RNA sequence: GGGAACGACUCGAGUAGAGUCGAAAAAGUGUGGUUGAGGGCAUGGGGCUGGAUGUUCGUGCGCGGUCGAAUGUGGUUGCGUUUAUUCAGCAGCAGCAAGAGGCCACGGGAGUAGUACCUGAUGAGGGUUUUACUAGCCUUUCGAGGCUAGUAAAACAAAAGAAACAACAACAACAAC
Reactivity to 2A3 in 0.01 (KOAc 150mM, MgCl2 10mM, bicine 150mM(pH8.5), 24C), signal-to-noise 2, nucleotides 027 to 126: a000g190u100g010u040g000g060u020u070g000a090g040g050g000c180a160u040g040g000g020g170c030u000g040g020a050u040g070u120u080c110g070u090g070c020g020c040g040g030u040c020g060a090a090u240g030u120g080g000u040u060g010c010g000u000u060u100a140u110u000c070a030g000c000a030g000c010a000g010c000a020a010g010a030g050g000c000c000a000c000g030g040g010a010g000u050a000g000u050a080c000c010u050g050a120u120g080a130g000g110
Reactivity to DMS in 0.01 (KOAc 150mM, MgCl2 10mM, bicine 150mM(pH8.5), 24C), signal-to-noise 3, nucleotides 027 to 126: a090g010u000g030u010g000g020u010u010g000a230g000g000g010c050a040u000g030g000g010g020c020u000g000g010a050u000g000u010u010c150g020u000g010c020g020c060g020g000u000c080g000a150a140u010g020u000g000g040u000u000g010c050g010u000u020u010a080u010u000c080a060g030c010a040g010c020a040g010c030a030a030g000a300g000g010c020c010a040c030g030g000g010a090g000u000a050g010u000a070c030c010u000g000a100u010g010a150g010g000